RNA sequence: GGGAACGACUCGAGUAGAGUCGAAAACGCUGGGUAUCGGGGACAUGAACGUACUGAAGCGCGCACGGUAUGGUUCAACAGCUCUCUAGCGUGUACCUGUGCUGAAGCGCGCACGGCAACCGAAAGGUGCGACAAGAUCCCGAUUCGUCGGGAUCAAGCUCUCCUUAUCGUUCGCGAUAAGGAGAGCAAAAGAAACAACAACAACAAC
Reactivity to 2A3 in 0.01 (KOAc 150mM, MgCl2 10mM, bicine 150mM(pH8.5), 24C), signal-to-noise 2, nucleotides 027 to 156: c010g000c020u030g000g030g110u160a250u180c120g000g030g000g040a030c060a220u150g000a020a000c030g020u050a010c000u010g060a240a050g000c010g010c000g020c000a020c000g040g000u030a030u110g170g030u000u030c060a110a070c070a200g050c000u000c000u000c040u140a000g020c000g010u030g000u030a110c000c000u070g060u110g030c110u150g100a080a000g000c000g030c020g000c000a000c010g000g000c010a060a270c080c010g000a050a050a070g050g000u000g010c030g120a040c100a120a030g010a020u020c000c000c000g000a010u040u020c180g040u000c000g140g000g000a020u000c000a000a000